[RMDB]
RNA sequence: GGGAACGACUCGAGUAGAGUCGAAAAAAAGAUAUGGAGUUGAGGGAGCGGCGAAGAGCUAAGACAGUGCAUCGGAAACGAUGCAUCGAGCUUGGAGGUCGCGAAGAACUCAACUCCUAAGUCAAAAUCUUAAGAACGGGUUCGCCCGUUCUUAAGAAAAAGAAACAACAACAACAAC
Reactivity to DMS in 0.01 (KOAc 150mM, MgCl2 10mM, bicine 150mM(pH8.5), 24C), signal-to-noise 2, nucleotides 027 to 126: a080a060a060g020a030u000a300u000g000g000a040g000u000u000g000a080g000g000g000a100g030c000g000g000c000g010a300a290g000a000g000c000u000a100a030g030a190c300a080g010u000g000c010a000u020c000g000g020a110a030a200c000g040a000u000g000c010a010u000c050g000a080g020c040u000u030g000g020a260g000g000u000c000g030c010g000a050a030g000a120a140c030u000c010a000a010c030u000c000c000u000a050a080g010u010c000a100a070a070a170

The record gives the reactivity of an RNA of 177 nucleotides to DMS. The DMS profile rests on 1,135 reads. Reactivities are given for positions 27 through 126.